[RMDB]
RNA sequence: GGGAACGACUCGAGUAGAGUCGAAAACACUCACGAUUCGUCGUGAGUGAAAGAACGCCAAAGUGACGCAAUCUUCCGCGUCAGGAACGCGAAACGAGGUAAAAACCGGGUCCUUCGGGACCCGGAAUCGUAGUAAUCGGUUCGCCGAUUACUACGAAAAAGAAACAACAACAACAAC
Reactivity to DMS in 0.01 (KOAc 150mM, MgCl2 10mM, bicine 150mM(pH8.5), 24C), signal-to-noise 3, nucleotides 027 to 126: c000a000c000u000c000a000c000g030a030u010u010c190g010u000c000g000u000g020a010g000u000g000a050a060a080g010a100a180c080g000c000c020a010a180a150g010u000g010a150c020g030c010a110a160u000c210u000u020c120c060g010c110g000u000c060a040g000g030a040a070c240g000c020g010a030a100a020c110g000a200g030g020u010a040a050a060a110a080c000c010g040g000g010u000c000c010u010u000c200g050g010g010a010c000c000c000g010g000a010a010
Reactivity to 2A3 in 0.01 (KOAc 150mM, MgCl2 10mM, bicine 150mM(pH8.5), 24C), signal-to-noise 2, nucleotides 027 to 126: c000a000c000u010c010a000c000g020a030u050u050c180g030u010c010g020u080g000a000g000u000g000a000a000a000g010a120a020c060g010c010c020a080a050a020g060u020g010a000c000g030c000a050a090u060c060u140u040c060c050g020c000g060u030c010a000g010g000a040a010c050g000c010g000a000a070a000c030g020a070g010g050u110a140a090a020a030a000c000c000g000g030g000u000c000c000u040u090c170g050g000g000a000c000c000c000g000g000a000a000